[RMDB]
RNA sequence: GGGAACGACUCGAGUAGAGUCGAAAAGAUAUGGAACUUUCAUGCAGCAACAGCUCGGAAACGAGACAUGCUGUGUGAUGGUUCCUAAGUCAAAACUCUGGUAUCCUGUUCGCAGGAUACCAGAGAACUAGUCAUUGUGCUUCGGCACAAUGACUAGAAAAGAAACAACAACAACAAC
Reactivity to 2A3 in 0.01 (KOAc 150mM, MgCl2 10mM, bicine 150mM(pH8.5), 24C), signal-to-noise 1, nucleotides 027 to 126: g030a000u080a090u170g010g010a010a040c000u050u000u000c040a000u020g030c010a010g000c010a030a090c030a230g020c010u000c020g050g010a060a080a040c010g020a010g010a040c040a070u080g000c000u000g000u000g010u000g020a000u000g000g030u000u000c000c000u000a060a020g030u000c030a020a000a080a290c000u000c000u020g000g040u000a020u020c030c010u000g060u070u120c300g000c080a000g020g000a000u000a000c020c000a010g000a010g010a000a000
Reactivity to DMS in 0.01 (KOAc 150mM, MgCl2 10mM, bicine 150mM(pH8.5), 24C), signal-to-noise 1, nucleotides 027 to 126: g000a060u000a300u000g000g000a010a000c000u000u000u000c000a040u000g000c000a010g000c000a020a030c300a160g000c010u000c000g000g000a090a070a190c010g000a030g000a050c070a160u000g000c020u000g010u010g010u010g010a000u000g000g000u010u010c000c000u000a010a060g000u000c020a080a100a120a080c000u000c000u000g010g010u000a000u010c000c010u000g000u000u010c190g000c010a010g010g010a000u000a000c000c000a000g000a000g000a050a120